The data come from the RNA Mapping Database (RMDB), library OK1LIB. This 177-nucleotide RNA was probed chemically with 2A3 and DMS. The reactions ran in a buffer of 150 mM KOAc, 10 mM MgCl2 and 150 mM bicine (pH 8.5), at 24 C. Values cover nucleotides 27 to 126. 2A3 adducts were read by reverse transcription with SuperScript II with manganese.
RNA sequence: GGGAACGACUCGAGUAGAGUCGAAAAGCCGGGAUUGUUUACGGUGGUCGUUGAAGUCAUAGCCAUAAGAUGAACGUUAGACUAUGGAAAAUCUUUGAAAGUUUAUCAAAGUUAUUGUGCGACCGAGCUAUAUUUAAUUAUUCGUAAUUAAAUAUAGAAAAGAAACAACAACAACAAC
Reactivity to 2A3 in 0.01 (KOAc 150mM, MgCl2 10mM, bicine 150mM(pH8.5), 24C), signal-to-noise 1, nucleotides 027 to 126: g000c000c000g020g050g070a250u000u050g000u000u030u040a050c000g000g000u030g010g010u000c000g010u010u190g110a090a000g030u020c000a050u000a040g020c030c000a090u020a140a030g010a050u160g090a090a030c010g000u000u020a010g000a010c010u000a000u010g000g000a040a000a000a100u020c000u000u010u010g030a080a060a000g040u140u250u060a030u010c000a020a000a000g000u020u020a070u090u130g070u060g020c010g000a010c000c010g000a000g000
Reactivity to DMS in 0.01 (KOAc 150mM, MgCl2 10mM, bicine 150mM(pH8.5), 24C), signal-to-noise 4, nucleotides 027 to 126: g000c010c000g000g000g000a090u000u010g000u010u010u010a060c060g000g030u020g010g000u000c010g010u000u020g010a070a080g020u040c020a010u010a030g010c010c030a120u020a040a080g010a120u020g010a080a110c190g010u010u000a030g000a050c020u000a020u000g000g000a060a060a100a060u020c010u000u000u010g000a010a110a210g020u040u050u030a060u010c010a020a020a040g000u000u020a030u020u020g000u000g010c010g010a060c020c040g000a090g010

The DMS profile rests on 6,368 reads.